Chemical mapping of a 207-nucleotide RNA with 2A3 and DMS. It was measured as part of the RMDB library M2RFPK. Reactivities are given for positions 27 through 156. For DMS the reverse transcriptase was MarathonRT. Reactivities are rounded to 0.1 and cut off at 0 and 3. 2A3 adducts were read by reverse transcription with SuperScript II with manganese.
[RMDB]
RNA sequence: GGGAACGACUCGAGUAGAGUCGAAAAGAUCGGAAACAGCAGCAGGUGAGUCCGCCUUAUGUGAAGGAUCAGCUGAAACACGAGGAAAUACUGAGCCAACGCAAGACGGUAGCCGAACAGUAGCAACAAAACGCUUACGUGUUCGCACGUAAGCGAAGAUAGCUUAUACGUUCGCGUAUAAGCUAUCAAAAGAAACAACAACAACAAC
Reactivity to 2A3 in 0.01 (KOAc 150mM, MgCl2 10mM, bicine 150mM(pH8.5), 24C), signal-to-noise 8, nucleotides 027 to 156: g040a050u100c050g020g030a080a050a030c030a040g050c010a000g010c010a010g050g010u040g040a090g090u010c030c020g020c030c010u140u130a160u120g050u040g060a060a040g020g010a040u050c020a000g030c050u080g050a090a080a020c110a030c090g010a070g030g090a050a080a040u130a080c020u030g010a010g020c010c010a030a010c040g000c030a040a020g020a010c020g040g000u030a020g030c030c020g020a030a020c030a060g060u090a020g040c030a010a040c010a060a100a010a010c020g010c000u000u000a000c000g000u000g010u040u070c200g000c070a000c000g000u000a000a000g000c000g000a010a000
Reactivity to DMS in 0.01 (KOAc 150mM, MgCl2 10mM, bicine 150mM(pH8.5), 24C), signal-to-noise 3, nucleotides 027 to 156: g000a090u000c040g020g010a130a060a080c050a140g000c030a060g010c120a080g010g040u000g000a240g010u000c010c010g000c030c000u000u000a090u000g010u000g000a090a260g020g000a080u000c040a040g020c020u000g010a150a070a070c040a120c100g000a120g050g010a090a100a180u010a060c030u000g010a070g000c010c000a050a300c020g010c020a050a110g010a120c030g010g020u000a170g020c010c030g020a060a060c050a100g020u010a090g030c060a080a140c030a060a060a120a150c030g010c010u000u000a000c010g030u010g000u000u010c300g040c010a010c000g000u000a010a010g020c000g000a010a020